RNA sequence: GGGAACGACUCGAGUAGAGUCGAAAAACGUUCGAUCGAUCGUUCGAGUUCGAUCGAUCGAUCGAUCACUCGUGUACGUGAUCUCGAGUGAUCGUGAUCUCUCGUACGUGUGAACACACGAGUGUACUCGUGUACGAGUACGUGUACUCUCGAGUUCCUACCCGUACCACUUCGGUGGUACGGGUAGAAAAGAAACAACAACAACAAC
Reactivity to 2A3 in 0.01 (KOAc 150mM, MgCl2 10mM, bicine 150mM(pH8.5), 24C), signal-to-noise 1, nucleotides 027 to 156: a000c010g050u020u010c030g010a010u000c000g020a000u000c010g050u000u040c090g030a170g180u190u240c050g040a010u000c000g010a000u000c000g010a000u020c000g000a000u000c040a000c000u030c050g040u060g010u060a080c110g050u090g040a170u080c040u020c000g010a040g020u030g030a150u000c000g000u130g080a070u000c060u000c060u000c110g010u020a030c050g000u030g030u060g100a070a020c030a000c000a080c200g020a140g050u070g000u010a060c010u000c030g090u140g100u150a060c040g000a000g010u000a000c020g010u010g000u040a030c000u040c000u000c040g020a010g020u080u040c030
Record summary: Structure probing data (2A3) for a 207-nucleotide construct. Conditions: 150 mM KOAc, 10 mM MgCl2 and 150 mM bicine (pH 8.5), 24 C. Source: RMDB library OK3TST, as collected in RNAgym.